Chemical mapping of a 177-nucleotide RNA with 2A3. For 2A3 the reverse transcriptase was SuperScript II with manganese. The RNA was probed in 150 mM KOAc, 10 mM MgCl2 and 150 mM bicine (pH 8.5) at 24 C. It was measured as part of the RMDB library OK1LIB.

[RMDB]
RNA sequence: GGGAACGACUCGAGUAGAGUCGAAAACUAGCAAACGUGGUGUUGCCAGGCUGUCCGUUUGAUCUACAAAAAAUGCGGGAAUUUUUCGACCAAGAACAAUGUGACGUCAGCACACGUUCUUAACCAUCGAUACCAUGCCGUUCGCGGCAUGGUAUCGAAAAGAAACAACAACAACAAC
Reactivity to 2A3 in 0.01 (KOAc 150mM, MgCl2 10mM, bicine 150mM(pH8.5), 24C), signal-to-noise 2, nucleotides 027 to 126: c070u050a020g100c030a000a010a000c030g010u030g000g040u120g020u000u030g000c000c210a100g090g000c010u010g070u030c000c020g000u000u000u090g080a100u060c070u180a160c250a000a140a040a040a110a100u050g010c120g000g030g100a010a000u130u080u010u000u000c060g030a040c080c070a030a000g020a000a050c050a040a100u130g040u060g050a050c060g060u160c120a020g030c000a040c040a040c000g000u020u000c000u050u060a050a000c000c000a090u080